[RMDB]
RNA sequence: GGGAACGACUCGAGUAGAGUCGAAAAUCGGACGGCGGCCAUGAGUCGCAACGCAAAGCCGCGGCAAGUGGAGUUAGCGAGAAGAGACUAGGCUUUGGUUUAUUCAAGUGAAGCGGUCACCAAUCAGAAUAGCUUGCGCAGUUCGCUGCGCAAGCAAUCACAUAUGAUUCUUCGGAAUCAUAUGUGAAAAAGAAACAACAACAACAAC
Reactivity to DMS in 0.01 (KOAc 150mM, MgCl2 10mM, bicine 150mM(pH8.5), 24C), signal-to-noise 2, nucleotides 027 to 156: u000c020g020g000a160c040g010g000c030g020g000c000c020a090u000g010a300g040u010c000g010c010a040a020c040g000c010a120a180a150g030c010c010g060c010g020g060c040a050a270g020u000g010g000a090g000u000u010a110g020c040g000a240g000a110a120g000a110g010a090c030u000a090g030g020c050u000u000u010g020g010u000u000u000a110u010u000c020a030a180g030u000g020a070a100g030c030g020g000u010c010a050c000c000a030a130u020c070a080g010a090a110u000a110g010c000u000u010g000c000g000c010a030g040u000u000c300g020c060u010g000c010g040c000a000a010g010c000a000a050
Reactivity to 2A3 in 0.01 (KOAc 150mM, MgCl2 10mM, bicine 150mM(pH8.5), 24C), signal-to-noise 5, nucleotides 027 to 156: u040c020g010g040a010c020g040g010c010g030g100c020c020a090u090g020a010g030u030c000g000c040a040a030c040g010c100a120a110a040g050c060c040g000c040g010g010c060a060a030g030u040g030g030a060g030u080u090a050g040c020g020a050g010a080a030g060a000g020a010c020u030a070g010g080c000u030u040u040g090g020u080u130u080a120u110u120c090a090a000g040u040g080a070a010g020c000g020g010u020c020a030c050c010a010a080u130c010a010g090a140a080u110a070g000c000u000u000g000c000g000c000a000g010u070u080c160g050c130u000g000c010g000c000a000a000g000c000a000a000